[RMDB]
RNA sequence: GGGAACGACUCGAGUAGAGUCGAAAAUCGCUGAGCCUGUCGCUUGCGGCUGGGGCGCAUGUGAGGGUGGCGUGCAACGACGCUGGUGGACGUGUCCUGUCGACGGCGGAGGAGUACGCAGCGGCUACGGUAUAUUACGGUUCGCCGUAAUAUACCGAAAAGAAACAACAACAACAAC
Reactivity to 2A3 in 0.01 (KOAc 150mM, MgCl2 10mM, bicine 150mM(pH8.5), 24C), signal-to-noise 9, nucleotides 027 to 126: u080c010g000c030u050g050a030g040c010c010u300g160u260c020g010c020u020u060g010c020g100g050c060u140g030g010g030g050c020g000c010a020u050g020u030g030a050g030g030g020u060g060g020c000g010u020g020c010a040a030c020g040a000c000g010c010u170g180g100u060g070g010a020c030g070u120g150u180c030c110u140g010u020c030g070a040c000g000g010c000g000g000a020g000g000a020g010u010a010c030g000c010a010g000c000g020g000c020u070a050
Reactivity to DMS in 0.01 (KOAc 150mM, MgCl2 10mM, bicine 150mM(pH8.5), 24C), signal-to-noise 9, nucleotides 027 to 126: u000c050g020c020u010g000a190g010c020c020u000g020u000c050g010c020u000u000g010c030g010g000c090u000g020g010g010g010c040g010c030a020u000g010u000g010a300g000g000g020u000g010g010c010g020u000g010c040a040a180c090g000a200c020g010c010u010g020g040u000g010g020a050c030g010u010g000u010c180c140u010g010u000c030g000a040c030g000g010c010g000g000a190g010g000a300g010u010a050c040g010c010a100g010c030g010g010c130u010a110

An RNA of 177 nucleotides, treated with 2A3 and DMS and read out base by base. Source: RMDB library OK2TST, as collected in RNAgym. The reactions ran in a buffer of 150 mM KOAc, 10 mM MgCl2 and 150 mM bicine (pH 8.5), at 24 C.